[RMDB]
RNA sequence: GGGAACGACUCGAGUAGAGUCGAAAAAUUGGGGAGUAGCCGCUCUUCACCGCGAAGAGGCUUGCGUCAACACACUUGGUCCAUCGGACCAUGGCGCAGGCAGCUCCUGGCCUGGCAAGACCUUUGAAGUCCUGUUAAAUUUCGAUUUAACAGGACUAAAAGAAACAACAACAACAAC
Reactivity to DMS in 0.01 (KOAc 150mM, MgCl2 10mM, bicine 150mM(pH8.5), 24C), signal-to-noise 6, nucleotides 027 to 126: a080u030u020g020g010g010g010a080g010u010a100g030c070c120g000c020u010c010u000u010c020a110c140c120g000c190g000a030a040g000a030g000g000c010u000u000g000c010g000u000c030a050a140c230a120c260a120c260u010u000g000g010u010c000c010a130u030c280g020g000a010c010c000a030u000g000g000c010g000c030a000g000g000c010a120g010c020u010c020c030u000g010g000c000c000u000g000g010c090a090a120g000a090c090c000u010u000u000g000a140
Reactivity to 2A3 in 0.01 (KOAc 150mM, MgCl2 10mM, bicine 150mM(pH8.5), 24C), signal-to-noise 9, nucleotides 027 to 126: a000u110u090g010g010g000g000a010g020u050a020g030c020c010g030c020u000c000u010u010c030a070c100c150g090c110g020a030a010g020a010g040g010c010u000u010g000c010g000u000c020a050a040c050a020c020a020c180u040u050g000g000u000c020c030a280u170c290g010g000a000c000c010a020u010g000g000c010g000c010a000g000g000c000a000g010c000u030c020c030u030g040g010c000c010u000g010g000c030a050a010g030a100c010c000u020u020u050g050a080

Chemical mapping of a 177-nucleotide RNA with DMS and 2A3.
The RNA was probed in 150 mM KOAc, 10 mM MgCl2 and 150 mM bicine (pH 8.5) at 24 C.
For DMS the reverse transcriptase was MarathonRT.